[RMDB]
RNA sequence: GGGAACGACUCGAGUAGAGUCGAAAAGAAAGUCAGCGGGUGGAAGCAUCUGUGCGUGGGUUAGGUAGCCUCAUAUACAUGAACGACUGAUGUAGAGUUCGAUUGGGGAGAUAAGUAUCUAAUGCGUCAUGUCUAACAGGUUCGCCUGUUAGACAUGAAAAGAAACAACAACAACAAC
Reactivity to 2A3 in 0.01 (KOAc 150mM, MgCl2 10mM, bicine 150mM(pH8.5), 24C), signal-to-noise 2, nucleotides 027 to 126: g010a000a080a000g070u050c020a010g030c060g000g080g050u120g010g030a050a020g030c020a060u000c020u120g100u060g020c000g030u050g000g070g010u030u030a020g030g080u000a020g000c040c000u000c010a030u130a010u070a080c100a080u170g030a010a010c020g160a080c060u080g090a120u080g050u080a020g020a000g120u000u040c020g010a070u040u040g100g000g020g000a050g010a040u080a000a050g040u050a010u030c040u030a050a090u120g010c010g000u000
Reactivity to DMS in 0.01 (KOAc 150mM, MgCl2 10mM, bicine 150mM(pH8.5), 24C), signal-to-noise 2, nucleotides 027 to 126: g010a120a070a120g010u010c060a070g010c040g000g010g020u010g030g000a150a150g010c070a060u010c080u000g000u000g000c110g010u000g010g000g010u000u000a040g010g000u010a090g020c030c040u000c010a040u020a100u020a120c130a080u000g010a040a060c060g000a130c050u010g020a080u000g030u000a090g020a230g000u000u010c030g000a130u000u000g010g000g020g000a130g000a060u010a030a110g040u000a060u000c040u020a070a060u010g020c140g030u010